Structure probing data (2A3 and DMS) for a 177-nucleotide construct. For 2A3 the reverse transcriptase was SuperScript II with manganese. The RNA was probed in 150 mM KOAc, 10 mM MgCl2 and 150 mM bicine (pH 8.5) at 24 C.
[RMDB]
RNA sequence: GGGAACGACUCGAGUAGAGUCGAAAAAGCUUUAAUAGUGAGGUAAGCUUUAAUAUAGCACUCCUAAUUCAUAACGCUACACUCGUGCAUAAUUUAUUUUUAAUUUGUGCACGAGCGUUAGUAAAUUUGUCAUCAUCUUAUUCGUAAGAUGAUGACAAAAAGAAACAACAACAACAAC
Reactivity to 2A3 in 0.01 (KOAc 150mM, MgCl2 10mM, bicine 150mM(pH8.5), 24C), signal-to-noise 3, nucleotides 027 to 126: a000g090c070u150u100u050a170a100u100a090g120u120g080a010g070g150u300a120a040g010c000u000u030u020a150a040u170a050u090a020g030c000a000c030u010c010c000u040a060a030u150u040c100a050u040a150a000c100g000c000u020a010c020a000c020u000c000g000u000g000c000a000u000a030a010u030u040u100a100u030u170u010u030u080a070a110u040u040u030g010u000g000c010a000c010g000a000g020c000g000u000u000a020g010u000a010a010a110u000u000
Reactivity to DMS in 0.01 (KOAc 150mM, MgCl2 10mM, bicine 150mM(pH8.5), 24C), signal-to-noise 1, nucleotides 027 to 126: a040g000c030u000u000u020a090a060u130a000g030u010g020a120g010g000u100a130a250g000c000u000u040u000a100a170u050a000u000a000g020c110a180c180u000c000c050u000a090a190u000u100c090a160u010a010a120c130g040c060u000a000c030a220c000u000c000g010u000g000c000a000u000a000a000u000u000u000a090u010u010u000u070u000a000a020u000u000u000g000u000g020c000a050c000g010a000g100c060g020u030u030a030g000u010a030a130a100u010u020
The data come from the RNA Mapping Database (RMDB), libraries RFM100 and RFMREP.